This 207-nucleotide RNA was probed chemically with 2A3.
RNA sequence: GGGAACGACUCGAGUAGAGUCGAAAAUGGGCGAUCGCUCGCUGUUUUUGUGGCUGGCUUUCAGCGGGCUGGAGGAGCCGGGAGCGGAGGCGGAGGACCGAGCUAAAAACGUCAGCCGAGGCCGGGCAAUAUCGUGGACUGUUCGCAGUCCACGAAACUUAUCAAUCAACUUCGGUUGAUUGAUAAGAAAAGAAACAACAACAACAAC
Reactivity to 2A3 in 0.01 (KOAc 150mM, MgCl2 10mM, bicine 150mM(pH8.5), 24C), signal-to-noise 2, nucleotides 027 to 156: u090g010g010g040c080g040a090u080c080g030c020u020c020g020c010u020g040u030u080u030u060u100g130u050g040g000c010u010g000g020c000u000u080u070c010a010g000c000g010g020g000c020u000g020g010a060g000g060a040g030c060c070g010g000g000a040g020c060g020g050a030g010g050c070g020g030a040g030g000a010c040c060g020a040g010c090u140a000a000a000a030a030c030g010u010c020a000g000c030c000g000a040g000g000c050c000g020g000g020c030a050a060u100a010u160c010g000u000g000g000a000c000u000g000u050u090c190g000c100a000g000u000c000c000a000c000g010a000a000a000
It was measured as part of the RMDB library M2RFPK. The reactions ran in a buffer of 150 mM KOAc, 10 mM MgCl2 and 150 mM bicine (pH 8.5), at 24 C.